[RMDB]
RNA sequence: GGGAACGACUCGAGUAGAGUCGAAAAUCCUAAGUCGAUCUUAAGUACGAGAGGUAGCGGUAGGCUUCGGAAACGAAGCCUAUAAUCGCUACUACCCACCUCGUACGGAGGAUCGAUAUGGAAAAGCAGAUCCUGACGUUCGCGUCAGGAUCUGCAACACUGUUAACUGGUUCGCCAGUUAACAGUGAAAAGAAACAACAACAACAAC
Reactivity to DMS in 0.01 (KOAc 150mM, MgCl2 10mM, bicine 150mM(pH8.5), 24C), signal-to-noise 1, nucleotides 027 to 156: u000c010c000u000a070a170g000u010c030g040a020u010c010u010u000a300a300g030u000a020c010g010a070g010a160g010g000u000a010g030c020g010g040u000a060g010g000c000u000u010c010g000g000a300a000a240c010g020a000a050g010c000c000u000a000u000a100a070u000c030g010c000u000a000c000u010a000c030c000c020a300c200c000u010c010g010u000a010c000g010g010a190g000g000a000u000c000g010a000u000a090u000g000g000a050a100a160a150g040c000a040g010a040u010c020c010u040g010a040c000g040u000u010c300g000c050g040u000c010a010g000g020a010u000c050u020g060c010a000a070
Reactivity to 2A3 in 0.01 (KOAc 150mM, MgCl2 10mM, bicine 150mM(pH8.5), 24C), signal-to-noise 2, nucleotides 027 to 156: u030c010c000u010a070a040g010u010c000g000a010u010c000u050u070a030a010g000u000a000c000g000a000g000a010g000g040u010a000g000c010g000g020u020a010g000g010c000u000u000c010g010g030a060a100a000c020g000a010a020g000c000c000u000a000u010a000a010u020c000g010c000u000a000c000u000a000c030c010c020a070c000c000u000c000g010u000a000c010g020g000a010g000g010a010u000c000g000a000u000a020u060g020g030a040a080a030a090g020c000a000g000a020u000c000c000u000g000a010c000g050u080u110c300g020c020g180u000c000a000g000g000a000u000c000u000g000c000a010a000